Structure probing data (DMS and 2A3) for a 177-nucleotide construct. DMS adducts were read by reverse transcription with MarathonRT.
RNA sequence: GGGAACGACUCGAGUAGAGUCGAAAAGAUAGACAAGGUUAACAGCUAGAAUAAUUCAUUUAAGAUGGCACACUUCAAGCGUGAAAGAUCGCUGACAAAAGUGCCCGCACCCUGUUUCGAGCCAAAAAUGUUGUGAAAAGUUCGCUUUUCACAACAUAAAAGAAACAACAACAACAAC
Reactivity to DMS in 0.01 (KOAc 150mM, MgCl2 10mM, bicine 150mM(pH8.5), 24C), signal-to-noise 5, nucleotides 027 to 126: g020a120u010a030g000a100c120a070a110g010g020u000u020a100a070c130a110g010c020u000a070g000a110a070u000a070a070u040u020c120a050u030u020u010a040a070g000a110u030g010g000c000a030c030a120c150u000u000c170a070a000g010c000g000u000g000a070a090a120g040a100u010c010g000c000u000g000a120c300a040a040a150a100g010u000g000c050c010c110g010c130a070c020c020c050u000g010u000u000u000c040g010a170g020c100c210a020a060a080a140
Reactivity to 2A3 in 0.01 (KOAc 150mM, MgCl2 10mM, bicine 150mM(pH8.5), 24C), signal-to-noise 3, nucleotides 027 to 126: g030a020u170a060g090a030c040a060a060g050g040u120u130a080a050c020a060g010c030u060a040g110a050a060u150a170a090u160u090c070a100u050u140u160a060a030g020a080u090g000g000c000a010c000a010c030u060u190c110a070a050g000c000g000u010g030a000a010a040g080a020u300c000g000c000u000g020a010c010a000a010a020a020g010u020g010c000c000c000g000c020a030c000c010c000u000g000u000u030u020c050g020a050g020c040c000a030a130a030a000
The reactions ran in a buffer of 150 mM KOAc, 10 mM MgCl2 and 150 mM bicine (pH 8.5), at 24 C.